RNA sequence: GGGAACGACUCGAGUAGAGUCGAAAAACGCGCGUACGAUGCGCCAGCGCACGAUCCGUACAGCGCGCGGCGCUGACUCGCGGUACCUGUGGCGCACGGCCCGUGAUCGCGCUACAGAGGAUCCGGCCGACGUUCCUAUCUUCGGAUAGGAACGUCGAAAAGAAACAACAACAACAAC
Reactivity to 2A3 in 0.01 (KOAc 150mM, MgCl2 10mM, bicine 150mM(pH8.5), 24C), signal-to-noise 2, nucleotides 027 to 126: a000c160g030c000g020c010g120u250a050c020g050a050u050g000c000g000c000c000a040g020c000g020c010a020c080g070a120u170c110c080g060u200a110c050a060g030c020g000c000g000c050g010g030c010g000c000u030g010a030c000u000c030g000c000g020g000u030a050c000c000u000g000u020g000g000c000g020c010a060c140g110g000c030c000c040g090u090g090a180u120c080g000c030g000c020u000a000c000a000g030a090g030g050a050u060c030c020g030g030c040
Reactivity to DMS in 0.01 (KOAc 150mM, MgCl2 10mM, bicine 150mM(pH8.5), 24C), signal-to-noise 2, nucleotides 027 to 126: a110c170g030c000g000c060g030u010a030c010g000a120u000g020c000g000c000c010a110g070c000g030c000a040c030g030a150u010c120c230g010u000a060c200a140g030c000g000c010g000c110g000g000c010g000c010u000g010a280c160u010c040g020c000g020g010u010a120c040c000u000g000u020g030g010c000g020c000a140c120g010g010c000c020c070g020u010g020a110u010c090g000c010g020c000u000a000c020a060g000a200g000g000a140u000c010c000g020g000c220